[RMDB]
RNA sequence: GGGAACGACUCGAGUAGAGUCGAAAAGUUAUGGAAAACGUCUUAGCUACCACUACAACAACAAUGCUGGACGGUGAUGGUUCGACUUACUCGAAACCAUCACGUAGUGGUAGUCGUUCGCAUUCAAUUAUCCCCGAAAGUUCGCUUUCGGGGAUAAAAAAGAAACAACAACAACAAC
Reactivity to 2A3 in 0.01 (KOAc 150mM, MgCl2 10mM, bicine 150mM(pH8.5), 24C), signal-to-noise 1, nucleotides 027 to 126: g020u100u100a040u260g080g030a020a140a000a070c020g020u040c060u070u220a010g010c010u000a000c010c010a000c000u030a010c030a180a000c010a040a010c000a120a190u190g030c040u050g070g040a060c060g010g000u000g000a000u040g010g030u000u010c030g060a050c060u160u220a120c070u080c000g000a050a040a000c000c000a020u000c000a000c030g000u000a020g000u000g000g000u000a010g000u000c000g010u010u030c030g020c020a030u020u020c010a040a140
Reactivity to DMS in 0.01 (KOAc 150mM, MgCl2 10mM, bicine 150mM(pH8.5), 24C), signal-to-noise 2, nucleotides 027 to 126: g010u000u000a090u000g000g030a070a080a080a080c070g000u000c010u000u030a160g010c010u000a000c000c000a000c010u000a000c000a070a070c140a070a050c190a090a070u020g020c060u010g030g010a020c100g030g030u020g000a010u000g000g000u000u000c000g000a000c270u010u010a070c250u000c000g010a020a020a030c010c000a020u000c000a000c030g000u010a010g020u000g000g040u000a000g000u000c050g020u000u000c020g000c050a120u000u000c120a050a130